The record gives the reactivity of an RNA of 177 nucleotides to 2A3. As a SHAPE reagent, 2A3 marks flexible, mostly unpaired nucleotides at the ribose 2'-OH. It was measured as part of the RMDB library OK1LIB.

RNA sequence: GGGAACGACUCGAGUAGAGUCGAAAACGAGGAUAAUAAUAGAGGCACUAUGCGCAUUAGAAUUUUUUCUAUAUGUAUCAAGAAUGAUUCUCGAUCUGAUUUGUGAAAGAUGCCGUUUAUUGCCUCAGACGUGCAGUGGUUUCGACCACUGCACGUCAAAAGAAACAACAACAACAAC
Reactivity to 2A3 in 0.01 (KOAc 150mM, MgCl2 10mM, bicine 150mM(pH8.5), 24C), signal-to-noise 2, nucleotides 027 to 126: c060g000a050g060g030a110u090a160a020u110a040a000u030a080g110a110g050g030c000a000c000u020a020u150g010c000g000c000a010u010u030a010g030a010a000u100u060u090u000u000u000c080u050a220u000a040u090g220u110a230u080c040a050a000g010a040a010u090g080a020u150u000c020u000c080g100a150u010c080u070g120a210u040u060u040g160u010g010a020a020a020g110a100u000g000c000c000g010u000u080u040a000u000u000g000c000c010u000c000a000